[RMDB]
RNA sequence: GGGAACGACUCGAGUAGAGUCGAAAACUGCCCACCUCCCCUCAGCCGAGCCUAGAGCAGAGAGGCCUGGCUUCCUCCCCCACAGGGCAGGUGGUUGAGACAGGAACCUGGCCCCGGGCUGGCCUCGACUGAUUAAGCUUUUCGAAGCUUAAUCAGUAAAAGAAACAACAACAACAAC
Reactivity to 2A3 in 0.01 (KOAc 150mM, MgCl2 10mM, bicine 150mM(pH8.5), 24C), signal-to-noise 7, nucleotides 027 to 126: c010u020g000c010c000c000a020c000c010u010c000c010c010c000u050c030a010g020c020c010g100a010g010c010c010u120a080g020a050g110c110a020g090a010g020a030g120g000c000c010u020g020g000c000u030u020c010c010u070c010c030c000c000c000a040c030a050g000g020g000c000a000g000g040u010g010g020u060u140g060a080g020a080c080a050g040g010a020a020c000c010u020g050g000c000c000c010c010g000g000g000c010u010g010g000c000c010u060c030g030
Reactivity to DMS in 0.01 (KOAc 150mM, MgCl2 10mM, bicine 150mM(pH8.5), 24C), signal-to-noise 6, nucleotides 027 to 126: c060u020g000c030c010c010a240c060c020u000c050c010c000c030u010c130a080g010c030c020g000a120g010c030c010u000a100g000a110g010c090a120g000a160g010a080g000g020c010c000u000g010g000c150u000u000c030c020u000c040c020c070c000c020a080c100a100g000g000g020c040a030g000g010u000g000g010u010u010g000a150g020a120c160a070g000g000a070a050c020c010u000g000g010c000c000c010c020g000g000g000c030u000g000g000c040c060u010c080g000
An RNA of 177 nucleotides, treated with 2A3 and DMS and read out base by base. Conditions: 150 mM KOAc, 10 mM MgCl2 and 150 mM bicine (pH 8.5), 24 C. For 2A3, 19,238 sequencing reads were counted.